RNA sequence: GGGAACGACUCGAGUAGAGUCGAAAAGAGCGAUUAGACAAAGGGGUAGAGCUACAUAUUAGAUAGCUGUAUAAUCGUUCAAGUUACAUCAAAACAUCUUCAAUAGUUAUUACUUACUUUCCUUUCUGCCAGAGUACGGUAUUCGUACCGUACUCAACAGCCGGUUGAAAUUCGUUUCAACCGGCUGAAAAGAAACAACAACAACAAC
Reactivity to 2A3 in 0.01 (KOAc 150mM, MgCl2 10mM, bicine 150mM(pH8.5), 24C), signal-to-noise 2, nucleotides 027 to 156: g050a010g000c000g000a000u010u020a000g030a050c100a060a150a120g000g020g050g000u070a000g070a000g120c040u010a000c070a050u240a220u260u160a150g120a300u000a000g020c050u040g040u030a090u020a010a010u030c000g000u000u000c050a050a010g060u120u160a040c080a100u100c100a060a090a050a090c020a080u100c100u300u140c120a140a190u080a050g070u100u150a150u170u090a090c000u030u030a020c000u000u000u050c010c000u050u020u030c070u120g060c070c100a050g000a000g000u000a000c000g000g000u000a050u000u040c010g020u020a000c000c000g000u000a000c020u000c000a000a000

This 207-nucleotide RNA was probed chemically with 2A3.
Conditions: 150 mM KOAc, 10 mM MgCl2 and 150 mM bicine (pH 8.5), 24 C.
It was measured as part of the RMDB library M2RFPK.